RNA sequence: GGGAACGACUCGAGUAGAGUCGAAAAAAUACCGUGCAAUGGAACGUGGCAGUGAGACAGUGGGGGAUAAGCUUCAUUGUCGAGAGGGAAACAACCCAGAUCAGCAGCUAAGGUGCCUAAAUAACGCGGUAUUUAUAGGGUUCGCCCUAUAAAUACCAAAAGAAACAACAACAACAAC
Reactivity to 2A3 in 0.01 (KOAc 150mM, MgCl2 10mM, bicine 150mM(pH8.5), 24C), signal-to-noise 7, nucleotides 027 to 126: a000a000u200a040c020c010g020u030g030c020a060a180u130g030g020a080a040c040g040u040g030g000c010a050g050u020g070a040g010a020c010a000g010u030g000g000g000g020g050a110u100a240a050g050c020u010u010c010a020u000u020g020u030c020g000a010g000a010g040g030g030a060a120a020c050a050a050c020c000c000a010g020a090u080c030a000g040c000a000g000c010u040a090a020g060g000u040g020c000c010u120a130a090a060u220a080a040c090g020c050
Reactivity to DMS in 0.01 (KOAc 150mM, MgCl2 10mM, bicine 150mM(pH8.5), 24C), signal-to-noise 7, nucleotides 027 to 126: a070a030u010a060c030c020g010u020g000c110a080a050u020g000g010a050a070c060g030u010g010g020c030a050g020u000g000a180g020a030c030a020g030u000g000g000g010g000g000a140u040a090a160g010c020u000u000c010a030u000u000g030u000c010g000a090g010a120g010g010g010a130a080a100c220a080a110c020c010c010a060g000a080u010c040a070g020c060a040g000c050u010a040a070g000g020u010g000c020c030u010a020a040a060u030a070a080c230g010c150